Conditions: 150 mM KOAc, 10 mM MgCl2 and 150 mM bicine (pH 8.5), 24 C.
This 207-nucleotide RNA was probed chemically with 2A3.
2A3 adducts were read by reverse transcription with SuperScript II with manganese.
It was measured as part of the RMDB library RNAMAK.
[RMDB]
RNA sequence: GGGAACGACUCGAGUAGAGUCGAAAACCCCGAGUUCGCUCGGGGAAAAAAGCGUACUACAAAGAGGACUAUUGAGUACAGAUCCCAAAUAGGAUCUCGUACAAUGAUGUAGUCUACCCACCUUUGUAUCGCAAAAAACUACAGUUCGCUGUAGUAACGUACAAUCUGUCUUCGGACAGAUUGUACGAAAAGAAACAACAACAACAAC
Reactivity to 2A3 in 0.01 (KOAc 150mM, MgCl2 10mM, bicine 150mM(pH8.5), 24C), signal-to-noise 1, nucleotides 027 to 156: c010c050c020c000g000a010g000u140u090c130g130c080u070c150g000g000g010g080a010a180a000a000a000a000g030c030g030u070a020c010u000a000c010a000a010a000g000a020g000g000a000c000u000a000u030u050g010a030g000u000a000c000a020g000a000u050c030c020c000a110a200a040u100a040g000g000a000u010c010u040c250g000u000a000c000a010a270u060g020a030u070g020u000a000g000u000c010u010a070c070c060c000a020c020c010u000u040u050g020u000a020u170c080g030c000a000a070a050a070a070a000c000u010a000c000a020g030u030u100c100g130c100u030g000u020a020g030u060a080a020